About this RNA: Chemical mapping of a 177-nucleotide RNA with DMS. In probing experiments dimethyl sulfate is read out at A N1 and C N3, which are open when not base-paired. The data come from the RNA Mapping Database (RMDB), library TTRINS. The reactions ran in a buffer of 150 mM KOAc, 10 mM MgCl2 and 150 mM bicine (pH 8.5), at 24 C.

RNA sequence: GGGAACGACUCGAGUAGAGUCGAAAAGAUAUGGAAUUUAGCUUAAGCGUUUGCCAUGGAGCUCUGGUGUCGGAAACGACACUUGAGCUAUGAAGUGGCAAACGCUUAAGCUACUGAUUCCUAAGUCCUAUCCGUACGAGUUCGCUCGUACGGAUAGAAAAGAAACAACAACAACAAC
Reactivity to DMS in 0.01 (KOAc 150mM, MgCl2 10mM, bicine 150mM(pH8.5), 24C), signal-to-noise 1, nucleotides 027 to 126: g010a130u020a300u000g000g010a040a030u000u000u000a020g000c010u000u010a010a030g020c000g030u000u000u000g000c000c000a000u000g000g030a010g040c010u000c000u000g010g000u000g010u000c010g010g010a150a080a170c010g020a010c000a030c000u000u000g000a010g010c000u000a020u030g020a120a230g000u000g000g000c000a010a020a000c000g000c010u000u000a000a000g000c000u000a000c300u000g000a020u000u000c000c010u010a080a160g010u000c030